[RMDB]
RNA sequence: GGGAACGACUCGAGUAGAGUCGAAAAUCUGGUGCUGAAUGCGUUGAAAAUUGGAAGACUGGAUUCCAACAUUAAUCAUGCUUGUCCGGUAAUAAGACCAAGCUAGCAGAUCUAAAUUAGGGAAAAGAUGGCUUAUGAAUUUCGAUUCAUAAGCCAUAAAAGAAACAACAACAACAAC
Reactivity to DMS in 0.01 (KOAc 150mM, MgCl2 10mM, bicine 150mM(pH8.5), 24C), signal-to-noise 4, nucleotides 027 to 126: u000c020u000g020g020u000g000c050u030g000a100a030u000g010c060g010u000u010g000a070a060a160a140u000u010g000g000a060a060g010a160c070u000g010g010a120u000u000c040c040a040a100c130a040u000u010a060a090u010c070a060u010g000c000u000u010g000u000c060c220g000g000u000a040a080u020a130a090g000a050c040c030a060a130g000c020u000a050g010c030a030g010a050u000c100u000a050a040a090u010u010a080g010g010g010a070a040a110a160g010
Reactivity to 2A3 in 0.01 (KOAc 150mM, MgCl2 10mM, bicine 150mM(pH8.5), 24C), signal-to-noise 1, nucleotides 027 to 126: u010c020u080g030g010u110g060c060u060g110a170a040u060g010c050g010u080u030g120a080a060a090a130u050u090g040g040a000a030g060a080c050u100g000g090a050u060u000c000c000a010a000c000a020u060u150a050a040u060c030a060u060g010c000u030u060g040u000c000c000g050g000u060a170a080u050a300a000g040a020c010c050a000a010g050c010u040a030g030c010a000g010a020u000c010u160a020a050a280u080u130a050g000g020g080a000a010a140a000g170